[RMDB]
RNA sequence: GGGAACGACUCGAGUAGAGUCGAAAAGGCCCAGGUCGGAAACGGAGCAGGUCAAAACUCCCGUGCUGAUCAGUAGUGGGAUCGCGCCUGUGAAUAGCCACUGCACUCCAGCCUGAGCAACAUAGCGGAGAUGAAAAUUGUUCGCAAUUUUCAUCUCAAAAGAAACAACAACAACAAC
Reactivity to 2A3 in 0.01 (KOAc 150mM, MgCl2 10mM, bicine 150mM(pH8.5), 24C), signal-to-noise 2, nucleotides 027 to 126: g080g000c010c010c010a020g020g010u010c040g010g000a080a120a120c050g030g030a080g000c050a010g020g000u110c020a000a070a090a110c020u010c000c010c000g000u020g020c030u090g030a250u080c090a000g040u040a030g070u060g040g020g000a030u020c060g020c030g030c070c040u030g020u030g050a120a150u070a070g000c000c030a050c030u070g000c050a020c060u010c000c010a010g010c000c010u050g000a020g030c000a020a090c020a050u170a040g140c100g110
Reactivity to DMS in 0.01 (KOAc 150mM, MgCl2 10mM, bicine 150mM(pH8.5), 24C), signal-to-noise 2, nucleotides 027 to 126: g010g010c000c010c000a070g000g020u000c050g010g010a010a060a170c090g000g000a180g030c130a030g000g050u000c120a070a060a130a140c120u010c040c020c050g030u000g000c050u000g010a030u020c080a060g020u010a020g030u020g010g000g000a030u000c070g020c140g020c050c050u010g000u000g010a080a080u010a140g000c020c020a060c040u000g000c060a160c070u010c000c000a040g010c010c030u000g010a050g000c020a080a080c120a100u010a090g010c160g010
Structure probing data (2A3 and DMS) for a 177-nucleotide construct.
For DMS, 1,476 sequencing reads were counted.
Values cover nucleotides 27 to 126.